[RMDB]
RNA sequence: GGGAACGACUCGAGUAGAGUCGAAAAUGGGUAUUCGUACCCAACACUCUCCUAAGUCGUCCGUGGAGGGAUGUCACACCGCUUUCGGAAACGAAAGAACUACGGUGUGCAUCCCGUUGAAACGGACGAUAUGGACAUCGCACCGGUUCGCCGGUAACUCAUCCAUCGGUUUCGACCGAUGGAUGAGAAAAGAAACAACAACAACAAC
Reactivity to 2A3 in 0.01 (KOAc 150mM, MgCl2 10mM, bicine 150mM(pH8.5), 24C), signal-to-noise 2, nucleotides 027 to 156: u040g010g030g010u060a010u020u160c260g030u030a040c020c020c040a020a040c030a000c030u080c000u020c000c030u130a210a080g030u000c010g000u000c010c000g010u020g000g020a040g010g000g000a000u030g290u300c020a000c000a000c010c010g000c000u000u000u010c010g000g020a060a040a050c000g010a040a000a000g000a030a000c110u130a030c160g000g000u000g000u010g000c010a000u000c020c000c000g020u020u020g010a000a000a000c010g010g000a010c010g000a000u000a000u010g010g000a020c020a190u140c100g000c070a030c030c000g090g000u110u090c210g030c110c000g150g000u090a020a040
This 207-nucleotide RNA was probed chemically with 2A3. Values cover nucleotides 27 to 156. The reactions ran in a buffer of 150 mM KOAc, 10 mM MgCl2 and 150 mM bicine (pH 8.5), at 24 C. The data come from the RNA Mapping Database (RMDB), library RNAMAK. For 2A3, 1,533 sequencing reads were counted.